[RMDB]
RNA sequence: GGGAACGACUCGAGUAGAGUCGAAAAGAAAGAAAGAAAGAUGGUAGAGAUCCAGCAGCGAGGUAUAGAGUUCCUACGUAGAUUUCAGAAAGUAGGAACUUCAUACCGUGCUCUUGGACUUGCCGAACAUGUUAAAGUGGUUCGCCACUUUAACAUGAAAAGAAACAACAACAACAAC
Reactivity to 2A3 in 0.01 (KOAc 150mM, MgCl2 10mM, bicine 150mM(pH8.5), 24C), signal-to-noise 9, nucleotides 027 to 126: g100a020a060a010g090a040a070a010g120a060a100a010g110a090u270g010g010u110a110g020a010g010a300u000c000c000a000g010c010a000g000c020g080a050g010g000u010a010u030a050g020a000g000u000u000c000c000u000a000c010g040u080a040g060a300u110u250u160c110a070g140a150a120a010g010u000a000g000g000a000a000c000u000u010c000a000u000a000c000c000g030u050g000c000u000c010u020u040g000g000a000c000u000u010g000c000c000g000a020a010
Reactivity to DMS in 0.01 (KOAc 150mM, MgCl2 10mM, bicine 150mM(pH8.5), 24C), signal-to-noise 7, nucleotides 027 to 126: g020a100a080a080g000a100a110a100g010a090a090a100g000a100u020g000g010u000a030g020a030g000a140u000c000c000a000g020c210a020g010c000g010a050g000g000u000a000u010a070g010a010g000u000u000c000c000u000a010c000g020u030a120g010a150u020u030u030c270a110g000a100a070a190g000u000a010g000g000a000a000c000u000u000c030a000u000a010c000c000g010u010g010c000u000c020u000u000g000g000a010c020u010u000g010c000c020g010a110a130
The data come from the RNA Mapping Database (RMDB), libraries RFM100 and RFMREP. An RNA of 177 nucleotides, treated with 2A3 and DMS and read out base by base. DMS adducts were read by reverse transcription with MarathonRT.